Structure probing data (DMS and 2A3) for a 177-nucleotide construct. It was measured as part of the RMDB library OK1LIB. 2A3 adducts were read by reverse transcription with SuperScript II with manganese.
[RMDB]
RNA sequence: GGGAACGACUCGAGUAGAGUCGAAAAAAACAGCGGCAAAAGUGGCAAAUGAGAUUUCAAUAUCAACAGAGACAGAAUUUCUCGUGCGUGGUGCUGUAGGUUCUGGCAAAUCAACAGGCCUUCCACAGAAAGCGUAACGAUUCGUCGUUACGCUUUCAAAAGAAACAACAACAACAAC
Reactivity to DMS in 0.01 (KOAc 150mM, MgCl2 10mM, bicine 150mM(pH8.5), 24C), signal-to-noise 2, nucleotides 027 to 126: a070a010a040c080a000g040c030g000g000c040a070a030a030a060g020u040g030g000c000a070a120a000u010g030a050g000a080u000u030u000c060a010a060u010a130u030c060a070a040c280a100g020a080g000a040c300a020g000a010a010u020u000u000c020u000c000g000u030g000c110g000u000g000g000u020g000c010u000g000u000a000g020g000u000u040c030u000g000g060c110a020a100a020u040c130a060a030c090a040g010g000c030c040u030u010c010c020a070c160a030
Reactivity to 2A3 in 0.01 (KOAc 150mM, MgCl2 10mM, bicine 150mM(pH8.5), 24C), signal-to-noise 3, nucleotides 027 to 126: a000a000a000c010a010g010c040g080g030c010a050a000a000a150g120u090g050g030c010a030a060a170u070g020a030g000a010u040u080u080c070a170a110u060a070u250c030a000a060c010a060g040a000g070a080c060a030g120a030a000u140u150u020c040u010c020g040u020g000c040g000u060g060g190u100g020c000u010g020u020a040g000g050u060u150c000u010g020g010c140a110a040a100u130c030a000a180c000a030g000g000c010c010u040u000c010c010a040c010a000